[RMDB]
RNA sequence: GGGAACGACUCGAGUAGAGUCGAAAAGAUAUGGAUCCAUGAUCGAUGAAAGCUGCCUCGGAAACGAGUGCAGCUGGAGAUCAGGAUCCUAAGUCAAAAGGACUGCUUAGUUCGCUAAGCAGUCCAAGGAUAACGAGAUGUUCGCAUCUCGUUAUCCAAAAGAAACAACAACAACAAC
Reactivity to 2A3 in 0.01 (KOAc 150mM, MgCl2 10mM, bicine 150mM(pH8.5), 24C), signal-to-noise 3, nucleotides 027 to 126: g000a000u040a030u100g000g010a000u040c050c130a300u080g010a000u020c060g170a210u080g080a100a070a010g000c010u000g000c010c000u000c010g020g000a060a050a010c000g000a000g090u300g000c020a000g010c000u010g000g010a010g010a000u000c000a010g000g000a010u010c010c000u000a030a010g020u000c020a000a000a090a140g000g000a000c000u000g000c000u010u000a000g020u100u070c210g020c230u000a010a000g010c000a010g000u000c000c000a000a000
Reactivity to DMS in 0.01 (KOAc 150mM, MgCl2 10mM, bicine 150mM(pH8.5), 24C), signal-to-noise 2, nucleotides 027 to 126: g000a030u010a300u000g000g000a010u000c000c000a120u010g020a010u000c000g040a150u000g000a140a140a030g010c010u000g010c010c000u010c010g000g000a060a030a110c010g010a020g010u010g020c000a010g000c010u000g000g010a100g000a000u000c000a060g010g010a010u000c000c000u010a000a060g010u010c030a060a070a100a120g010g020a020c000u000g000c000u000u000a000g020u000u000c180g030c000u000a000a010g020c000a020g010u000c000c000a000a010